The data come from the RNA Mapping Database (RMDB), library RNAMAK. An RNA of 207 nucleotides, treated with DMS and 2A3 and read out base by base. The 2A3 profile rests on 2,963 reads. The RNA was probed in 150 mM KOAc, 10 mM MgCl2 and 150 mM bicine (pH 8.5) at 24 C. For DMS, 6,141 sequencing reads were counted. DMS adducts were read by reverse transcription with MarathonRT.
RNA sequence: GGGAACGACUCGAGUAGAGUCGAAAAGUACCUAACUUCGGUUAGGUACAAAAAACCGUAGGGUACAUCGAUCUCCAGUUCCAUCGAUCUUCGAAAGAGGGGAGGAAGUGGAGGGAGUACCCUAAACGGAAAAAACCUAAGUAUUCGUACUUAGGAAACAAUGGAGUAGAUUCGUCUACUCCAUUGUAAAAGAAACAACAACAACAAC
Reactivity to DMS in 0.01 (KOAc 150mM, MgCl2 10mM, bicine 150mM(pH8.5), 24C), signal-to-noise 2, nucleotides 027 to 156: g010u000a010c000c000u010a010a010c010u000u010c300g050g000u000u020a020g010g010u010a000c000a000a040a090a070a080a050c010c000g030u000a040g000g030g020u000a020c020a170u010c110g000a080u010c000u010c000c000a040g010u000u000c010c010a300u000c190g000a100u000c010u000u000c020g010a140a100a250g010a080g000g000g000g020a050g000g010a010a040g000u010g010g010a030g010g000g000a050g000u010a030c000c000c000u000a010a020a040c010g020g010a000a060a090a090a090a130c000c000u010a030a020g010u000a030u010u000c300g020u000a000c010u000u010a010g010g000a080a060
Reactivity to 2A3 in 0.01 (KOAc 150mM, MgCl2 10mM, bicine 150mM(pH8.5), 24C), signal-to-noise 3, nucleotides 027 to 156: g010u010a010c000c000u010a000a000c000u050u060c170g060g020u000u000a000g000g010u020a010c020a020a000a000a010a000a000c020c010g020u010a020g000g000g000u000a020c030a230u110c070g090a150u050c010u000c010c020a180g120u020u000c040c010a140u300c090g070a090u040c000u060u010c050g050a090a070a050g000a030g000g000g010g000a030g000g000a020a010g180u010g000g000a000g000g010g000a010g000u000a000c030c000c010u000a030a030a000c000g000g060a030a040a040a050a020a050c000c000u010a000a010g000u000a010u040u180c260g010u020a000c000u000u000a000g000g030a030a000